[RMDB]
RNA sequence: GGGAACGACUCGAGUAGAGUCGAAAAACACGUAGGGCGAGGGGUGGGCGAAAGUUGCCAUGAGACCGUAACUUUCGUAGUCAUUGAUAAAGGGGCAGGUCUCGCUCGUUUGUCAUUGCGGUUGCCUAAAACUGUGGUUCGUUCGCGAACCACAGAACACCGUCAGUAAGUUCGCUUACUGACGGUGAAAAGAAACAACAACAACAAC
Reactivity to 2A3 in 0.01 (KOAc 150mM, MgCl2 10mM, bicine 150mM(pH8.5), 24C), signal-to-noise 2, nucleotides 027 to 156: a000c130a000c060g080u090a020g070g060g020c130g060a080g040g010g040g010u200g000g040g010c030g000a000a000a000g020u000u030g030c030c060a140u190g080a020g030a150c030c050g020u000a010a010c000u000u000u020c030g000u000a010g020u040c060a090u050u200g080a050u090a060a070a030g020g040g000g000c030a060g120g020u050c000u040c060g020c010u030c020g080u000u060u060g060u040c020a050u050u050g020c070g040g000u080u080g020c000c000u050a060a110a050a110c000u000g010u000g000g000u000u000c030g000u010u000c100g000c000g070a000a000c000c000a000c000a000g000a000a000
The data come from the RNA Mapping Database (RMDB), library M2RFPK.
An RNA of 207 nucleotides, treated with 2A3 and read out base by base.
The reactions ran in a buffer of 150 mM KOAc, 10 mM MgCl2 and 150 mM bicine (pH 8.5), at 24 C.
Reactivities are given for positions 27 through 156.
2A3 adducts were read by reverse transcription with SuperScript II with manganese.